This 177-nucleotide RNA was probed chemically with 2A3.
[RMDB]
RNA sequence: GGGAACGACUCGAGUAGAGUCGAAAAUAAUGCCAUUUUACAGAACUGUAACGCAAAGGUCUUUUUCAAGGAGUCUGAAAAGGCAGUUGCUGUAAAUCUUGAACCGAACGCUUAAUGAUUUUUUAACCGGAACUGACGAUUUCGAUCGUCAGUUCCGAAAAGAAACAACAACAACAAC
Reactivity to 2A3 in 0.01 (KOAc 150mM, MgCl2 10mM, bicine 150mM(pH8.5), 24C), signal-to-noise 1, nucleotides 027 to 126: u300a050a050u170g160c000c020a090u000u010u000u000a000c000a000g000a000a000c000u000g010u020a240a060c020g100c210a130a200a100g120g070u160c090u070u040u030u200u220c050a000a140g000g000a050g150u090c010u000g080a300a000a000a000g000g000c000a000g000u000u030g180c000u000g000u010a030a030a030u040c000u180u160g000a050a020c100c080g070a060a020c030g060c030u060u150a070a020u300g070a190u020u000u000u000u000u130a150a110c000
For 2A3, 285 sequencing reads were counted. It was measured as part of the RMDB library OK1LIB. 2A3 is a SHAPE reagent: it acylates the 2'-hydroxyl of flexible nucleotides of all four kinds. For 2A3 the reverse transcriptase was SuperScript II with manganese. The reactions ran in a buffer of 150 mM KOAc, 10 mM MgCl2 and 150 mM bicine (pH 8.5), at 24 C. Values cover nucleotides 27 to 126.